[RMDB]
RNA sequence: GGGAACGACUCGAGUAGAGUCGAAAAAUUACGGGCGGCGCAGGUGGUGCUGCGAUCCCUCCGCCCAUCGCGUGCUCUCUCGGUGGCCCAGACGCUGCAAACGGACAGGCGGGCCACCUGCAACGAAGCUAAGCUAGCUUUUCGAAGCUAGCUUAGCAAAAGAAACAACAACAACAAC
Reactivity to DMS in 0.01 (KOAc 150mM, MgCl2 10mM, bicine 150mM(pH8.5), 24C), signal-to-noise 1, nucleotides 027 to 126: a080u010u010a060c150g000g000g000c030g000g020c140g010c030a030g000g000u020g010g030u000g040c000u000g000c000g040a130u000c000c010c020u010c020c010g020c010c010c000a110u010c080g030c090g000u010g020c030u000c100u000c070u000c130g000g020u000g030g000c000c000c000a040g010a060c110g000c040u000g000c010a100a190a110c230g000g000a180c030a060g020g050c090g020g020g000c000c010a020c010c010u000g010c070a060a050c040g020a110a130
Reactivity to 2A3 in 0.01 (KOAc 150mM, MgCl2 10mM, bicine 150mM(pH8.5), 24C), signal-to-noise 1, nucleotides 027 to 126: a010u200u130a090c080g000g000g030c000g000g000c010g000c020a000g000g060u120g070g010u130g200c010u000g020c000g030a040u040c000c000c000u020c000c010g000c010c000c000a000u010c010g050c030g060u030g000c010u040c010u050c010u020c160g000g020u000g000g000c000c040c000a060g040a060c170g000c130u010g000c020a110a260a200c110g020g120a100c000a010g000g000c000g000g020g010c000c000a000c000c000u000g000c020a010a040c010g090a060a020